[RMDB]
RNA sequence: GGGAACGACUCGAGUAGAGUCGAAAAAAAAGAUAUGGAAUCAGUUUACUUGGAUUUAUGAAGCCACUCCAUAUCGGAAACGAUAUGGGAGCUUCAUUGUCAGUAGGGCUGAUUCCUAAGUCAAAAACUAGAUCUAUGUGUUCGCACAUAGAUCUAGAAAAGAAACAACAACAACAAC
Reactivity to DMS in 0.01 (KOAc 150mM, MgCl2 10mM, bicine 150mM(pH8.5), 24C), signal-to-noise 2, nucleotides 027 to 126: a080a020a080a130g000a030u020a300u000g000g000a020a010u000c000a000g000u000u000u000a030c010u000u010g010g000a040u000u010u020a000u020g000a010a010g020c000c080a140c170u000c000c000a000u000a000u010c000g000g010a090a120a200c000g010a000u000a000u000g000g020g010a110g010c000u000u000c000a000u000u000g010u000c010a060g000u000a000g110g000g020c010u000g020a000u000u020c000c000u000a010a080g010u020c040a110a060a110a120a130
Reactivity to 2A3 in 0.01 (KOAc 150mM, MgCl2 10mM, bicine 150mM(pH8.5), 24C), signal-to-noise 2, nucleotides 027 to 126: a020a000a000a050g080a060u130a070u130g010g000a000a010u020c000a010g020u020u030u140a060c030u160u210g170g020a050u300u300u160a020u120g030a010a000g020c030c070a290c080u000c020c000a000u000a000u010c000g000g000a050a070a020c010g000a010u000a000u030g010g000g040a010g000c000u000u000c020a000u000u000g000u010c010a000g040u030a030g170g140g000c000u020g000a010u000u000c000c000u000a020a010g050u010c040a050a040a020a110a110